[RMDB]
The record gives the reactivity of an RNA of 177 nucleotides to DMS and 2A3. For 2A3, 16,647 sequencing reads were counted. 2A3 adducts were read by reverse transcription with SuperScript II with manganese. The RNA was probed in 150 mM KOAc, 10 mM MgCl2 and 150 mM bicine (pH 8.5) at 24 C.
RNA sequence: GGGAACGACUCGAGUAGAGUCGAAAAGUCAUAUCUGAACUUAAAGAGGGAGGAAUGGAUUUUUAUGUGCCCAGACAAGAGUCAAUGUUCAGAUGGAUGAGGUUCUCAGAUCUAAGCACAUGGGAGGGUAUACUACUCUGUUCGCAGAGUAGUAUACAAAAGAAACAACAACAACAAC
Reactivity to DMS in 0.01 (KOAc 150mM, MgCl2 10mM, bicine 150mM(pH8.5), 24C), signal-to-noise 9, nucleotides 027 to 126: g010u000c020a070u000a070u000c020u000g010a170a090c010u010u010a060a100a150g000a100g010g010g010a210g010g000a080a100u010g010g000a060u000u000u010u010u010a060u010g010u000g010c020c020c030a080g000a110c070a080a070g010a300g010u000c040a060a060u000g010u000u000c020a040g000a050u000g010g000a040u000g000a110g010g000u000u000c010u000c020a110g010a080u000c080u000a070a080g010c020a030c040a040u000g000g000g010a080g010g010
Reactivity to 2A3 in 0.01 (KOAc 150mM, MgCl2 10mM, bicine 150mM(pH8.5), 24C), signal-to-noise 8, nucleotides 027 to 126: g010u010c000a030u040a060u100c020u020g010a010a030c000u060u100a270a110a060g130a090g010g040g010a050g030g050a060a050u060g050g050a080u050u060u010u060u130a090u080g070u060g030c000c010c000a010g020a020c050a070a080g030a020g100u040c030a050a130u140g000u010u030c010a020g020a100u050g050g020a050u040g030a030g040g080u050u000c020u000c020a060g010a120u040c040u100a080a000g010c020a010c000a050u030g000g000g060a080g060g070